[RMDB]
RNA sequence: GGGAACGACUCGAGUAGAGUCGAAAAGGUCGGUGUUUCGACACCGACCACUUACCGAGAAUGUUCCUCGGUAUAUAAAACAAACCCUUCGAAACAAGGGAAUACGAAUCGUGUUCGCACGAUUCAAGGUAUGAUGGCUAUUCGUAGCCAUCAUACCAAAAGAAACAACAACAACAAC
Reactivity to DMS in 0.01 (KOAc 150mM, MgCl2 10mM, bicine 150mM(pH8.5), 24C), signal-to-noise 1, nucleotides 027 to 126: g010g000u000c000g000g000u000g010u000u000u000c140g010a030c030a040c010c000g000a000c000c010a020c050u000u000a010c000c000g000a040g000a110a100u000g000u000u000c050c010u000c000g000g010u000a000u000a040u000a070a030a090a110c290a100a030a130c010c000c020u010u000c060g010a120a090a150c260a010a000g000g000g000a100a040u030a070c110g000a020a000u000c000g010u000g010u000u010c270g080c000a020c010g010a040u000u000c000a060a050
Reactivity to 2A3 in 0.01 (KOAc 150mM, MgCl2 10mM, bicine 150mM(pH8.5), 24C), signal-to-noise 2, nucleotides 027 to 126: g000g000u000c000g000g000u010g000u010u060u170c220g030a030c000a010c000c000g000a000c010c000a000c000u020u000a010c000c020g010a010g000a090a170u300g030u130u060c000c010u000c010g000g020u000a000u000a010u010a110a060a010a010c040a010a090a100c000c000c000u000u010c100g180a100a040a040c030a010a050g050g000g010a050a040u110a050c090g000a010a010u000c000g010u000g040u020u060c190g000c010a000c000g000a000u010u000c010a000a000
An RNA of 177 nucleotides, treated with DMS and 2A3 and read out base by base. The data come from the RNA Mapping Database (RMDB), library M2PK50.